[RMDB]
RNA sequence: GGGAACGACUCGAGUAGAGUCGAAAAGCUGCAGCCCUAGCCCUGCCCUGGCCAGAUACAUGGCCUUCCCUCUGCAGCCUGCUUUGUGGAAAAAGCAUAGGUACCACUUAGUGGACCUGGGGUGGGGGUGGGGGGACAGGCAGUGAAUAAACGUGGACAAUACUAGUUCGUUCGCGAACUAGUAUUGAAAAGAAACAACAACAACAAC
Reactivity to 2A3 in 0.01 (KOAc 150mM, MgCl2 10mM, bicine 150mM(pH8.5), 24C), signal-to-noise 1, nucleotides 027 to 156: g030c010u000g000c020a010g000c030c000c020u050a060g030c030c010c020u010g030c000c010c000u000g000g080c040c010a040g140a130u200a270c060a200u070g030g000c010c040u000u050c000c000c000u000c000u010g030c020a220g160c050c100u080g020c010u130u000u080g130u300g020g000a000a010a000a120a000g110c060a070u150a020g070g020u290a300c030c000a060c110u180u220a020g060u050g010g000a010c000c020u020g030g010g000g070u110g000g000g010g050g010u030g070g020g000g000g010g010a050c060a010g010g000c000a030g000u010g070a020a050u170a080a170a010c150g090u100g000g000a010
Structure probing data (2A3) for a 207-nucleotide construct. Values cover nucleotides 27 to 156. Source: RMDB library OK3TST, as collected in RNAgym. Conditions: 150 mM KOAc, 10 mM MgCl2 and 150 mM bicine (pH 8.5), 24 C.